[RMDB]
The record gives the reactivity of an RNA of 177 nucleotides to 2A3 and DMS.
For 2A3 the reverse transcriptase was SuperScript II with manganese.
It was measured as part of the RMDB library OK2TST.
For DMS the reverse transcriptase was MarathonRT.
RNA sequence: GGGAACGACUCGAGUAGAGUCGAAAACUUUGAGCACGGCGGUAACCCGGUAAAUAUCACCAAGGCUCACCCAGACAGCGGGUUUCGAAGCACGCUGUAUGAUCUUGAAGUGCAAUGGCAGUACCUGCACACUGGUCGUAUUCGUACGACCAGUGUGAAAAGAAACAACAACAACAAC
Reactivity to 2A3 in 0.01 (KOAc 150mM, MgCl2 10mM, bicine 150mM(pH8.5), 24C), signal-to-noise 1, nucleotides 027 to 126: c030u040u080u120g040a020g010c050a050c100g020g000c000g040g040u070a100a110c090c000c000g030g010u120a070a070a040u140a040u070c010a000c060c020a000a020g120g000c000u000c000a020c010c030c000a010g040a050c000a000g000c020g010g000g000u020u050u130c100g080a060a000g000c030a030c030g030c010u000g050u110a110u110g050a020u040c040u070u090g070a130a010g040u020g030c040a040a090u030g030g000c000a010g000u040a040c010c020u010g030
Reactivity to DMS in 0.01 (KOAc 150mM, MgCl2 10mM, bicine 150mM(pH8.5), 24C), signal-to-noise 2, nucleotides 027 to 126: c090u000u000u000g030a040g020c050a090c140g000g000c060g010g010u000a030a100c040c040c030g020g010u010a060a050a150u000a050u000c050a040c020c020a070a150g010g000c020u000c030a120c050c040c030a130g000a020c030a020g010c010g010g000g030u000u000u020c210g010a140a130g020c030a040c010g000c000u000g030u010a070u000g000a070u000c080u010u000g020a130a100g050u000g000c040a050a050u010g000g000c050a080g010u000a080c040c020u000g020